RNA sequence: GGGAACGACUCGAGUAGAGUCGAAAACAGUGAUUUUGGUGAGCGCAUCCACUAAAUUAGCCACAUCUUGCCCAAAUUCUCGCUCAAUCGUUUCAAUCUCACAAGGCGUGUCUUCUACCACAUCAUGCCUUGCAAUCAGAUUCGUCUGAUUGCAAGGAAAAGAAACAACAACAACAAC
Reactivity to DMS in 0.01 (KOAc 150mM, MgCl2 10mM, bicine 150mM(pH8.5), 24C), signal-to-noise 4, nucleotides 027 to 126: c100a100g020u010g040a070u000u010u000u000g030g000u000g000a120g040c080g000c110a050u010c050c010a040c080u030a020a070a070u000u000a090g010c060c050a050c040a060u000c050u000u010g020c010c030c030a060a090a130u000u000c050u000c040g010c020u000c050a070a080u000c060g010u000u010u010c030a070a140u000c030u000c060a090c090a050a070g010g010c050g010u000g010u000c040u000u010c060u000a130c060c020a040c120a050u020c050a100u000g020
Reactivity to 2A3 in 0.01 (KOAc 150mM, MgCl2 10mM, bicine 150mM(pH8.5), 24C), signal-to-noise 4, nucleotides 027 to 126: c040a020g040u050g140a120u010u070u140u160g020g000u030g020a030g020c090g000c050a040u030c030c010a020c050u080a050a090a150u130u090a050g030c020c010a040c010a060u020c030u050u090g030c000c010c000a040a070a070u110u030c030u000c010g000c000u010c000a040a050u050c040g010u000u050u030c050a080a080u030c040u010c040a050c010a090a000g040g000c020g010u030g020u000c020u080u040c030u070a090c030c040a050c010a080u080c010a010u130g030
The record gives the reactivity of an RNA of 177 nucleotides to DMS and 2A3. The reactions ran in a buffer of 150 mM KOAc, 10 mM MgCl2 and 150 mM bicine (pH 8.5), at 24 C. Reactivities are given for positions 27 through 126. DMS adducts were read by reverse transcription with MarathonRT.